[RMDB]
RNA sequence: GGGAACGACUCGAGUAGAGUCGAAAACCAGAUGAACUGGGAGAAAACCACAGGAGCUUUUCCUUACUUCAAAGAGUCUGUCUUUGAAAAAUUUCUGACAACACCAGCUGACGAAGAGUACCUAUCACCACGUAUCGAAUUUCGAUUCGAUACGUGGAAAAGAAACAACAACAACAAC
Reactivity to 2A3 in 0.01 (KOAc 150mM, MgCl2 10mM, bicine 150mM(pH8.5), 24C), signal-to-noise 1, nucleotides 027 to 126: c000c010a000g030a090u080g030a100a070c090u050g000g050g030a020g050a050a120a010a000c060c000a040c050a060g030g060a030g050c060u060u050u200u230c000c010u050u170a150c000u040u010c000a030a030a040g060a100g140u100c110u180g170u000c010u170u060u040g010a020a040a030a030a060u160u250u100c040u130g030a050c020a030a000c000a090c000c000a000g000c000u070g020a010c070g030a030a040g030a010g040u000a010c050c010u040a030u080c030a030
Reactivity to DMS in 0.01 (KOAc 150mM, MgCl2 10mM, bicine 150mM(pH8.5), 24C), signal-to-noise 1, nucleotides 027 to 126: c000c000a070g050a180u010g020a070a110c030u000g020g000g030a120g000a110a060a050a090c070c130a020c160a000g030g030a080g010c080u000u000u000u000c000c010u010u040a080c150u000u030c000a020a030a020g010a070g010u020c140u010g000u000c000u000u000u000g000a010a070a090a140a100u000u000u000c100u010g010a100c050a100a090c060a060c050c010a080g020c100u000g000a050c090g000a100a110g020a140g020u010a020c030c050u000a120u000c100a210
Notes: Structure probing data (2A3 and DMS) for a 177-nucleotide construct. Values cover nucleotides 27 to 126. The RNA was probed in 150 mM KOAc, 10 mM MgCl2 and 150 mM bicine (pH 8.5) at 24 C. For 2A3 the reverse transcriptase was SuperScript II with manganese. DMS adducts were read by reverse transcription with MarathonRT.